[RMDB]
RNA sequence: GGGAACGACUCGAGUAGAGUCGAAAAGAACAUCGUCACGAACUCUGCAAUGGGAUCGGAAACAGUGGUGGUGGUCUCGUUGCUCAUGUCAUGCCUUCCAUUGGGUUGGAAGCUCUCCACCGUUGGAUGCCUGUGUAACUUUCGAGUUACACAGGCAAAAAGAAACAACAACAACAAC
Reactivity to 2A3 in 0.01 (KOAc 150mM, MgCl2 10mM, bicine 150mM(pH8.5), 24C), signal-to-noise 2, nucleotides 027 to 126: g030a080a040c040a080u090c050g060u040c010a010c090g020a070a050c060u020c030u130g070c040a050a110u080g000g000g060a010u040c010g050g040a080a110a060c100a080g060u100g080g040u010g000g030u050g000g000u050c000u040c040g030u020u110g020c020u040c100a020u080g050u030c020a010u090g070c000c010u020u000c020c010a060u010u150g210g080g130u050u050g100g070a140a060g000c000u000c010u000c020c030a030c030c000g010u000u030g060g010a050
Reactivity to DMS in 0.01 (KOAc 150mM, MgCl2 10mM, bicine 150mM(pH8.5), 24C), signal-to-noise 2, nucleotides 027 to 126: g010a110a130c080a020u010c040g010u010c020a020c040g010a110a050c060u000c060u010g010c080a050a030u010g000g000g010a090u000c030g000g000a120a130a080c080a180g010u000g000g010u000g010g010u010g000g020u000c010u010c010g010u000u000g010c040u010c090a030u010g000u000c030a100u000g030c070c030u000u000c010c000a040u010u000g010g020g010u020u000g030g010a030a090g000c250u010c050u010c010c010a050c040c040g010u000u010g010g000a120